Structure probing data (2A3 and DMS) for a 177-nucleotide construct. The RNA was probed in 150 mM KOAc, 10 mM MgCl2 and 150 mM bicine (pH 8.5) at 24 C. It was measured as part of the RMDB library TTRDES. The 2A3 profile rests on 7,491 reads.
[RMDB]
RNA sequence: GGGAACGACUCGAGUAGAGUCGAAAAGAUAUGGAUCCCACUAUGAUCGACGAUCUAGACGGUCGGAAACGACCGCUAGGGAGAUCACGUGGGAUCCUAAGUCAAAGCCGAUAGUUCGCUAUCGGCACGAGUUAAAUCGGUUCGCCGAUUUAACUCGAAAAGAAACAACAACAACAAC
Reactivity to 2A3 in 0.01 (KOAc 150mM, MgCl2 10mM, bicine 150mM(pH8.5), 24C), signal-to-noise 2, nucleotides 027 to 126: g050a020u070a040u130g010g010a010u010c000c120c010a000c020u120a250u300g020a010u000c020g300a300c010g000a040u000c010u000a010g260a300c010g000g010u010c000g010g000a080a070a020c020g000a000c020c010g020c010u010a010g000g000g010a020g000a000u010c000a010c080g000u010g010g000g000a000u000c000c000u010a020a000g020u000c040a100a110a020g000c010c000g000a000u000a000g040u050u090c300g000c240u000a000u010c010g000g000c010a000
Reactivity to DMS in 0.01 (KOAc 150mM, MgCl2 10mM, bicine 150mM(pH8.5), 24C), signal-to-noise 3, nucleotides 027 to 126: g000a050u000a300u010g000g020a020u000c000c000c010a010c030u010a270u010g010a010u000c000g000a100c300g000a020u020c000u010a000g010a140c000g010g000u000c000g000g000a070a090a140c010g030a010c000c000g010c010u000a010g010g010g000a020g000a010u000c000a040c300g010u000g000g000g000a000u000c000c000u000a010a100g010u000c030a080a110a200g010c000c000g000a010u000a010g010u000u020c300g010c000u000a000u000c010g000g010c000a010